[RMDB]
RNA sequence: GGGAACGACUCGAGUAGAGUCGAAAAGCAAGCUAGCCGGCAAAAAAGCAAACUUGACCACCAAGGAUAAAAGAGAUCUUAUCCAAGGAUGCAAAAGAUGAUCUCACUUUUGACACCCACUGAUCUCAAAACGUGCGGUUCUUCGGAACCGCACGAACGCAUUUACGUUGUUCGCAACGUAAAUGCGAAAAGAAACAACAACAACAAC
Reactivity to 2A3 in 0.01 (KOAc 150mM, MgCl2 10mM, bicine 150mM(pH8.5), 24C), signal-to-noise 1, nucleotides 027 to 156: g000c010a000a030g010c000u090a010g010c000c040g070g040c110a010a130a020a090a080a000g030c030a050a020a030c010u070u060g050a060c010c020a010c020c020a030a030g010g000a010u040a030a030a050a020g010a000g020a020u000c000u040u070a020u030c050c000a010a060g020g020a040u080g000c010a010a020a020a060g030a050u100g110a110u060c060u040c050a040c000u040u010u030u020g130a160c010a030c010c030c020a070c110u060g000a010u010c000u010c000a050a070a020a030c010g010u020g000c000g000g030u000u000c000u010u070c140g050g000a000a000c000c000g000c000a000c030g000a000a010